[RMDB]
RNA sequence: GGGAACGACUCGAGUAGAGUCGAAAAGGCUGAUGCCGGAGCCGAUACCGGAAUACGAGACCUCAUGUGCGGUCGAAUGCACUGAAGUACGAAAGUACGAAGAGGUCAAACCGAGGACCGAGACUCGAUAUGCUCGGUAGAUGGAGCUUUACAUCAAACCAGUAAUACUGUUCGCAGUAUUACUGGUAAAAGAAACAACAACAACAAC
Reactivity to 2A3 in 0.01 (KOAc 150mM, MgCl2 10mM, bicine 150mM(pH8.5), 24C), signal-to-noise 6, nucleotides 027 to 156: g020g000c040u060g050a100u110g080c020c020g000g000a010g010c030c110g110a020u090a110c010c000g010g050a070a020u140a090c090g020a030g010a080c000c010u010c010a030u070g010u000g000c000g010g050u130c120g050a070a050u150g000c000a000c010u040g050a080a010g000u010a010c000g030a120a020a010g000u010a000c010g010a070a030g000a000g010g000u000c000a010a010a010c040c010g020a040g030g020a000c010c020g010a010g020a070c030u020c070g090a130u070a040u210g050c010u000c000g000g020u010a030g010a010u060g040g020a070g030c050u060u070u110a060c030a040u050c030a070a090
Reactivity to DMS in 0.01 (KOAc 150mM, MgCl2 10mM, bicine 150mM(pH8.5), 24C), signal-to-noise 3, nucleotides 027 to 156: g000g030c030u000g010a050u010g030c010c020g000g030a070g020c040c090g010a200u000a100c020c000g010g010a120a130u000a110c090g020a250g000a040c000c010u030c030a300u020g010u000g010c000g010g000u010c180g000a100a140u000g010c000a060c010u000g010a140a190g020u000a000c010g000a130a160a240g010u000a040c000g000a100a110g010a060g020g030u000c020a040a080a100c050c010g000a160g030g000a110c030c030g000a080g000a130c100u000c060g010a120u000a100u000g000c010u000c000g000g000u000a030g000a080u000g010g020a130g030c030u000u000u010a040c060a030u000c030a070a180
This 207-nucleotide RNA was probed chemically with 2A3 and DMS. The data come from the RNA Mapping Database (RMDB), library OK3TST. For DMS the reverse transcriptase was MarathonRT.